The record gives the reactivity of an RNA of 207 nucleotides to DMS and 2A3. Conditions: 150 mM KOAc, 10 mM MgCl2 and 150 mM bicine (pH 8.5), 24 C.
[RMDB]
RNA sequence: GGGAACGACUCGAGUAGAGUCGAAAAGGGGUCCAUAAUGAAAUUGUGGAGGACGAUAAGUUACUGAAGCCUCCACGGUAACUUUUGACGUCCGUUGAAACAAUUCAAUGUUAUGGACGGAGGCACCCAAAUACUUGCCUAUUCGUAGGCAAGUAAACAAACUUAAUGGUUUCGACCAUUAAGUUUGAAAAGAAACAACAACAACAAC
Reactivity to DMS in 0.01 (KOAc 150mM, MgCl2 10mM, bicine 150mM(pH8.5), 24C), signal-to-noise 2, nucleotides 027 to 156: g000g030g010g020u000c010c010a000u040a020a010u000g000a080a020a100u000u000g020u020g000g020a100g030g010a060c060g000a130u000a050a030g000u000u000a060c010u000g020a030a090g000c000c000u000c000c000a160c000g000g000u000a020a000c010u000u000u000u000g040a270c040g040u020c010c010g010u000u000g000a290a180a040c030a020a040u000u000c100a040a120u000g000u010u000a060u000g010g000a030c000g000g010a010g040g050c020a120c010c010c020a080a070a280u000a020c000u000u010g030c000c000u000a040u000u000c300g010u000a020g020g020c000a010a000g010u000a000a040a160
Reactivity to 2A3 in 0.01 (KOAc 150mM, MgCl2 10mM, bicine 150mM(pH8.5), 24C), signal-to-noise 4, nucleotides 027 to 156: g060g000g020g010u000c020c010a000u010a010a010u060g190a060a010a010u010u010g000u000g010g020a040g010g000a000c020g020a100u040a250a000g000u000u000a000c000u020g020a090a010g000c000c010u000c000c010a010c000g010g000u010a000a000c000u060u100u120u290g300a250c190g000u010c000c010g100u060u010g000a010a010a000c000a000a000u020u020c010a030a050u090g010u060u020a000u000g000g010a000c040g000g000a000g000g000c020a040c010c010c010a040a130a000u100a010c010u010u000g000c000c000u030a040u050u110c300g070u050a000g000g000c000a010a000g000u000a000a000a000